[RMDB]
RNA sequence: GGGAACGACUCGAGUAGAGUCGAAAAGGAUCGAGUGCCAGCUGAACGUUACAGCCACCUUCAAUUUCUAGUGCGCGGAUAAUUUUCAACGACACAUCUCGCAACAAUUGGUAUUCGCGGUCGGAAAGAUGCAUGGGGAUUUCGAUCCCCAUGCAUCAAAAGAAACAACAACAACAAC
Reactivity to 2A3 in 0.01 (KOAc 150mM, MgCl2 10mM, bicine 150mM(pH8.5), 24C), signal-to-noise 1, nucleotides 027 to 126: g070g020a060u110c050g050a020g040u090g080c050c020a020g000c000u050g010a090a020c070g040u030u040a040c030a000g030c020c010a010c010c000u050u090c070a130a170u080u060u020c020u050a060g060u040g080c000g000c000g020g000a050u040a060a080u090u080u110u130c040a080a060c030g110a000c000a010c010a140u070c060u070c090g040c000a020a120c010a070a090u110u090g030g000u030a070u030u070c000g000c000g130g010u070c010g030g010a050a080a030
Reactivity to DMS in 0.01 (KOAc 150mM, MgCl2 10mM, bicine 150mM(pH8.5), 24C), signal-to-noise 1, nucleotides 027 to 126: g030g000a070u000c080g020a080g010u000g030c000c010a110g000c090u000g000a100a060c010g010u000u000a070c130a110g000c010c030a070c030c070u000u000c070a060a090u000u000u030c030u010a120g010u000g010c060g030c090g000g000a010u020a030a050u030u000u000u000c050a080a090c020g000a010c100a030c180a080u010c070u010c010g020c020a040a100c170a130a130u000u000g000g010u000a110u020u000c020g000c030g000g020u000c050g000g000a030a080a130